[RMDB]
RNA sequence: GGGAACGACUCGAGUAGAGUCGAAAAGAAAGAAGAACGCGAAUAUCUCAGUGCCCGUUUGAUUGAAGUUGAAAAACAGAUUGAAGAGCAUACUAAAGUUAUUAAGGCUUUAACCGCCAAAGCAAAUGGUUUACGUGAUGCUAUUGAGGUACUGAAAAAUCAAUGGCACAUUCGUGUGCCAUUGAUUAAAAGAAACAACAACAACAAC
Reactivity to 2A3 in 0.01 (KOAc 150mM, MgCl2 10mM, bicine 150mM(pH8.5), 24C), signal-to-noise 2, nucleotides 027 to 156: g030a000a060a010g070a020a000g090a060a000c070g030c040g070a100a080u080a130u180c050u010c010a000g000u010g000c000c000c000g030u010u040u060g090a110u050u050g050a120a020g000u040u000g040a000a080a000a000a000c040a000g100a040u010u090g050a110a020g050a000g050c000a000u020a010c010u030a070a010a000g030u080u040a080u120u110a200a050g040g000c000u080u050u010a080a040c080c000g020c070c080a110a010a000g070c040a000a110a100u150g020g040u020u050u080a070c090g000u060g040a040u010g010c010u010a030u130u140g030a060g030g030u010a010c000u060g000a090a000a000
Reactivity to DMS in 0.01 (KOAc 150mM, MgCl2 10mM, bicine 150mM(pH8.5), 24C), signal-to-noise 2, nucleotides 027 to 156: g000a130a070a070g010a050a080g030a000a130c030g000c060g010a050a090u000a060u010c070u000c020a060g050u020g020c030c020c010g050u000u000u000g030a080u010u000g010a100a170g030u010u000g010a090a080a070a010a070c030a200g030a060u000u000g000a080a140g020a050g000c010a060u000a090c050u010a020a040a050g010u010u000a090u000u000a120a170g020g020c020u000u000u010a080a050c070c050g020c030c010a060a070a070g060c090a100a150a100u010g020g010u000u010u000a020c110g000u020g010a110u020g030c000u000a110u000u010g000a090g030g020u000a080c040u020g010a010a060a040